[RMDB]
RNA sequence: GGGAACGACUCGAGUAGAGUCGAAAAGGUCAAACAUGUGUUGACAUCAAGGACAACGUGGUGGAUGAAGGGUUCUACUUCACCCCUAAGGGGGACGACCCAUGCCUGAGCUGCACCUGCCAUGGAGGCACAACGUUAAAUUCGUUUAACGUUGUGCAAAAGAAACAACAACAACAAC
Reactivity to 2A3 in 0.01 (KOAc 150mM, MgCl2 10mM, bicine 150mM(pH8.5), 24C), signal-to-noise 6, nucleotides 027 to 126: g110g010u080c040a050a050a020c090a180u200g160u070g020u090u050g030a010c000a060u090c080a090a090g100g010a050c030a090a040c120g040u020g000g030u040g000g050a150u100g070a120a110g000g030g000u070u050c010u050a060c000u030u080c020a090c010c000c000c030u090a150a300g070g000g030g000g010a050c040g010a030c000c000c010a030u070g010c010c030u130g020a050g010c050u040g000c040a020c030c020u020g010c020c000a050u070g020g030a060g110
Reactivity to DMS in 0.01 (KOAc 150mM, MgCl2 10mM, bicine 150mM(pH8.5), 24C), signal-to-noise 4, nucleotides 027 to 126: g010g000u010c030a030a090a080c130a070u020g020u000g020u000u020g030a030c020a040u000c100a110a120g000g000a120c090a090a050c030g000u020g000g000u010g000g000a100u010g000a110a200g000g000g010u000u000c050u030a040c010u000u010c060a130c000c000c010c010u030a070a090g020g000g020g030g000a110c150g000a040c000c000c010a060u010g000c010c070u030g010a140g010c060u000g020c080a110c050c000u000g000c010c020a020u000g000g010a140g030